Source information: Conditions: 150 mM KOAc, 10 mM MgCl2 and 150 mM bicine (pH 8.5), 24 C. An RNA of 177 nucleotides, treated with 2A3 and DMS and read out base by base. Reactivities are rounded to 0.1 and cut off at 0 and 3. 2A3 is a SHAPE reagent: it acylates the 2'-hydroxyl of flexible nucleotides of all four kinds.
[RMDB]
RNA sequence: GGGAACGACUCGAGUAGAGUCGAAAAUGCCAGAAUCUCAAACGAGCUCUCUGUAAAAAUCACAAGAUUUUAUUGUGCAUGGUAGCAUGAGUCUGUAAUCCCAGCUACCAGCUACUCAGGUGGCUGAUAAAAUUUCUCGUUUCGACGAGAAAUUUUAAAAAGAAACAACAACAACAAC
Reactivity to 2A3 in 0.01 (KOAc 150mM, MgCl2 10mM, bicine 150mM(pH8.5), 24C), signal-to-noise 3, nucleotides 027 to 126: u090g060c010c000a050g070a130a250u150c010u020c070a080a160a080c030g020a000g000c000u020c020u000c000u040g000u030a020a020a000a030a150u030c060a060c040a120a040g000a130u030u080u100u240a140u070u060g040u030g030c060a040u040g000g010u040a030g040c100a050u040g060a010g050u010c050u100g120u110a070a100u010c000c000c000a000g000c000u010a020c040c000a000g000c040u090a070c040u040c090a030g010g150u000g000g000c000u000g000a010
Reactivity to DMS in 0.01 (KOAc 150mM, MgCl2 10mM, bicine 150mM(pH8.5), 24C), signal-to-noise 2, nucleotides 027 to 126: u030g010c040c030a070g020a130a100u020c010u000c000a040a150a130c100g010a090g020c030u000c050u000c030u010g000u020a030a100a060a100a050u040c010a060c120a100a110g010a080u020u000u030u030a080u010u040g020u010g020c120a060u000g000g000u000a050g030c030a050u020g010a070g000u000c020u020g020u040a150a120u000c010c040c000a090g020c050u000a030c020c000a020g000c040u020a000c020u010c070a090g000g010u000g030g000c000u020g000a210